[RMDB]
RNA sequence: GGGAACGACUCGAGUAGAGUCGAAAAGAUAUGGAUCCAUGUACAAGAGGUGUACAGGGAGUAUGUGGGUCGGAAACGACCCAUGAAACCUGUACACUACCCACCUUGUACCGCUGGAUCCUAAGUCGUUGAUAUCUAUGUUCGCAUAGAUAUCAACAAAAGAAACAACAACAACAAC
Reactivity to DMS in 0.01 (KOAc 150mM, MgCl2 10mM, bicine 150mM(pH8.5), 24C), signal-to-noise 5, nucleotides 027 to 126: g000a100u010a300u000g000g000a010u000c000c000a000u020g010u010a010c000a000a020g000a120g030g000u000g010u000a010c000a000g000g000g010a130g030u000a060u020g010u000g000g010g010u000c000g000g000a110a100a260c020g020a010c000c010c010a000u000g000a160a290a150c010c000u000g010u000a000c000a010c000u000a010c050c080c110a300c100c000u000u000g000u000a010c000c010g000c010u000g000g000a010u000c000c000u000a010a090g010u010c150
Reactivity to 2A3 in 0.01 (KOAc 150mM, MgCl2 10mM, bicine 150mM(pH8.5), 24C), signal-to-noise 2, nucleotides 027 to 126: g080a060u210a100u280g000g000a000u000c000c010a020u210g010u010a020c000a010a000g010a010g030g000u010g000u000a000c000a000g010g020g020a000g040u030a040u300g000u020g010g020g030u030c030g000g050a080a110a020c020g010a000c000c030c000a000u010g000a000a000a000c010c020u000g000u010a000c010a000c010u000a000c000c000c020a070c010c000u000u020g010u000a010c020c010g000c030u010g020g010a010u020c000c000u000a020a020g080u050c110